Source information: The record gives the reactivity of an RNA of 177 nucleotides to 2A3. Reactivities are given for positions 27 through 126. It was measured as part of the RMDB library OK1LIB. The 2A3 profile rests on 1,222 reads.
[RMDB]
RNA sequence: GGGAACGACUCGAGUAGAGUCGAAAAGAUCAGGUCUACGGACCUGAUCAACGCUCAACCUCAGAGCGCAAAAGUCGAACGAAUACAGUUCGACAUGAGGAAAGCUCGCGCGUACGCGCGCGAGCAACGUCAGCAUCAGUUUCGACUGAUGCUGACGAAAAGAAACAACAACAACAAC
Reactivity to 2A3 in 0.01 (KOAc 150mM, MgCl2 10mM, bicine 150mM(pH8.5), 24C), signal-to-noise 2, nucleotides 027 to 126: g000a000u000c000a000g010g040u020c000u050a060c300g090g000a000c000c000u010g000a000u010c020a000a000c000g000c000u000c010a080a070c040c000u000c000a010g010a010g000c010g000c100a300a120a000a000g000u000c000g000a000a000c010g050a130a040u300a300c200a120g000u010u000c010g000a000c000a000u000g000a010g010g040a030a050a000g000c000u000c010g000c010g000c000g020u040a050c300g040c000g010c020g000c000g020a000g000c000a000a000